[RMDB]
RNA sequence: GGGAACGACUCGAGUAGAGUCGAAAAAGUUAGGUUCGCUAUGGUGCAACUCUUUAAGGCAAUAACGAACUGAUUCUAAGCAAGUAAUGGAGAAAUGCCAGGGUCACUAUCUAGCCAUAAUAGUGCUGUAAGUGACUUAGAUUCGUCUAAGUCACAAGGUCUAUAAACGAUUCGUCGUUUAUAGACCAAAAGAAACAACAACAACAAC
Reactivity to DMS in 0.01 (KOAc 150mM, MgCl2 10mM, bicine 150mM(pH8.5), 24C), signal-to-noise 3, nucleotides 027 to 156: a060g010u000u000a180g030g020u000u000c010g040c030u000a060u020g010g050u010g000c020a060a080c090u000c090u000u000u000a140a110g030g020c050a090a040u000a020a040c020g010a040a040c010u010g000a140u000u000c090u000a080a080g020c060a040a110g010u000a070a060u000g000g000a120g030a050a070a090u000g000c030c030a120g010g010g030u010c030a050c040u000a040u000c030u000a100g030c050c050a070u010a060a090u000a010g030u000g010c010u010g030u000a090a110g010u000g000a020c000u000u000a000g010a080u000u000c300g010u000c000u010a000a010g010u000c000a010c010a080a090
Reactivity to 2A3 in 0.01 (KOAc 150mM, MgCl2 10mM, bicine 150mM(pH8.5), 24C), signal-to-noise 6, nucleotides 027 to 156: a000g060u060u060a050g000g020u020u030c020g010c030u030a020u070g100g070u070g060c060a110a180c060u090c100u110u210u170a110a050g060g000c030a030a050u060a100a040c040g010a020a020c010u010g000a020u100u060c060u120a090a020g030c050a040a050g060u110a080a080u140g050g020a090g030a070a080a010u060g020c020c010a040g000g000g020u050c010a010c030u020a040u120c020u050a020g020c000c010a010u040a140a050u030a130g060u050g040c050u040g030u140a190a090g000u000g000a000c000u000u000a000g000a000u000u030c040g000u010c090u000a000a000g000u000c010a010c010a020a010